[RMDB]
About this RNA
The data come from the RNA Mapping Database (RMDB), library OK2TRN. Structure probing data (DMS and 2A3) for a 177-nucleotide construct. The RNA was probed in 150 mM KOAc, 10 mM MgCl2 and 150 mM bicine (pH 8.5) at 24 C. DMS adducts were read by reverse transcription with MarathonRT. For 2A3, 1,411 sequencing reads were counted.

RNA sequence: GGGAACGACUCGAGUAGAGUCGAAAAGAUCACUCGUCAUCGGCCAGACGUACGCGCCGAUCCAGCGCACGUGAUCCUGGAUCUCGAUGACGUGCGAUGAGCUGCAGGCGCGUCACGGCGCCAGUACCCCGCGAGUAUUGUUCGCAAUACUCGCGGGAAAAGAAACAACAACAACAAC
Reactivity to DMS in 0.01 (KOAc 150mM, MgCl2 10mM, bicine 150mM(pH8.5), 24C), signal-to-noise 1, nucleotides 027 to 126: g000a130u010c090a080c040u010c000g030u000c050a040u000c060g000g040c020c010a090g000a170c080g000u020a060c130g000c020g030c030c040g000a130u020c150c090a040g000c010g000c000a030c010g000u000g000a060u010c150c040u000g030g000a120u000c100u020c030g000a000u060g000a030c000g020u000g010c020g030a030u000g000a120g030c080u000g000c110a100g000g000c000g000c000g000u000c240a050c140g000g000c010g040c020c090a100g020u030a110c120
Reactivity to 2A3 in 0.01 (KOAc 150mM, MgCl2 10mM, bicine 150mM(pH8.5), 24C), signal-to-noise 1, nucleotides 027 to 126: g050a040u030c030a000c050u010c030g100u050c010a050u010c030g000g000c030c040a030g040a100c000g060u040a020c080g000c030g000c020c020g030a020u020c010c010a000g000c000g020c030a030c040g010u030g080a060u020c010c070u080g120g060a160u060c030u060c170g020a030u000g000a000c040g000u000g000c000g050a050u040g020a030g030c080u080g010c020a050g000g000c000g040c010g010u000c040a010c050g060g000c030g000c010c000a020g020u090a110c000